RNA sequence: GGGAACGACUCGAGUAGAGUCGAAAAACUGUACCUGAUCUCAAAGCUUUUUAGCUUAGUAUAUCUGUCAUGAAUUUGUAGGAUGUUCCAUUGCAUCAGAAAACGGACAGUGAUUUGAUUACUUUCUAAUGCCACAGAUGCAGAUUACAUGUAGUUACACUAUGGGAGUGUUCGCACUCCCAUAGUGAAAAGAAACAACAACAACAAC
Reactivity to 2A3 in 0.01 (KOAc 150mM, MgCl2 10mM, bicine 150mM(pH8.5), 24C), signal-to-noise 4, nucleotides 027 to 156: a010c030u010g000u030a020c000c000u000g050a040u020c030u030c070a080a090a000g000c040u060u120u060u180u210a020g020c050u020u020a030g020u020a090u020a030u110c020u010g040u020c010a070u060g120a160a130u090u080u100g060u070a040g040g120a050u010g010u090u120c140c010a030u070u290g000c010a000u020c020a020g110a030a120a000a020c040g040g000a010c010a030g040u010g060a030u090u100u120g050a060u030u050a020c000u000u040u010c010u050a030a030u080g000c010c020a040c010a040g020a030u070g090c000a010g000a120u050u110a050c050a070u060g000u000a060g040u000u000a030
Reactivity to DMS in 0.01 (KOAc 150mM, MgCl2 10mM, bicine 150mM(pH8.5), 24C), signal-to-noise 2, nucleotides 027 to 156: a090c040u000g020u020a070c040c000u000g020a080u010c050u000c060a070a070a060g010c020u010u010u000u010u000a020g020c030u000u000a110g020u000a020u010a030u010c030u010g020u000c020a040u000g000a110a150u000u000u010g030u000a140g010g020a050u010g010u010u010c060c210a180u000u010g010c010a020u020c010a150g020a090a050a060a080c030g030g010a050c040a220g000u000g010a080u000u000u000g000a110u000u000a060c010u010u000u000c000u000a050a070u000g020c010c050a080c050a030g000a060u000g020c030a030g010a100u000u000a060c050a110u000g000u000a090g010u000u000a280

This 207-nucleotide RNA was probed chemically with 2A3 and DMS. The data come from the RNA Mapping Database (RMDB), library OK3TST. The reactions ran in a buffer of 150 mM KOAc, 10 mM MgCl2 and 150 mM bicine (pH 8.5), at 24 C. Reactivities are given for positions 27 through 156. For 2A3, 2,008 sequencing reads were counted.